[RMDB]
RNA sequence: GGGAACGACUCGAGUAGAGUCGAAAAGCGCGCACCGUCAAACCUGGCGCAACCAUAGCGGUCAUGUCGCUGAUGGGCUCAUCGCGGUUCGACGUGCCCGAGGAGCAGCCCGCCGGGUAUCUGCUAAAGAGUACGCAAAAUUCGUUUUGCGUACUCUAAAAGAAACAACAACAACAAC
Reactivity to 2A3 in 0.01 (KOAc 150mM, MgCl2 10mM, bicine 150mM(pH8.5), 24C), signal-to-noise 2, nucleotides 027 to 126: g010c030g000c010g000c020a100c180c100g100u080c060a110a140a070c000c000u030g040g010c020g000c000a010a030c000c010a030u040a030g000c010g050g020u130c070a110u290g090u100c030g000c030u070g030a040u020g000g020g020c020u020c020a070u030c000g020c130g090g000u100u120c080g170a150c080g030u090g020c020c000c010g000a040g020g020a010g040c010a020g070c030c030c000g000c010c000g000g010g020u010a060u020c020u080g010c010u050a120a070
Reactivity to DMS in 0.01 (KOAc 150mM, MgCl2 10mM, bicine 150mM(pH8.5), 24C), signal-to-noise 3, nucleotides 027 to 126: g020c030g010c070g010c030a110c060c020g030u010c100a100a120a060c020c010u010g000g030c000g000c180a160a260c030c030a050u000a030g020c020g010g000u000c270a120u010g030u000c000g010c010u000g000a020u000g010g010g000c050u010c010a020u000c040g000c140g020g020u000u000c060g000a110c090g030u000g020c010c000c000g010a080g000g000a040g020c010a140g020c190c120c010g000c010c020g020g010g010u000a050u000c030u000g000c080u010a070a100
Chemical mapping of a 177-nucleotide RNA with 2A3 and DMS.
For DMS the reverse transcriptase was MarathonRT.
The RNA was probed in 150 mM KOAc, 10 mM MgCl2 and 150 mM bicine (pH 8.5) at 24 C.
For 2A3 the reverse transcriptase was SuperScript II with manganese.
It was measured as part of the RMDB library OK2TST.
Reactivities are given for positions 27 through 126.
The DMS profile rests on 2,529 reads.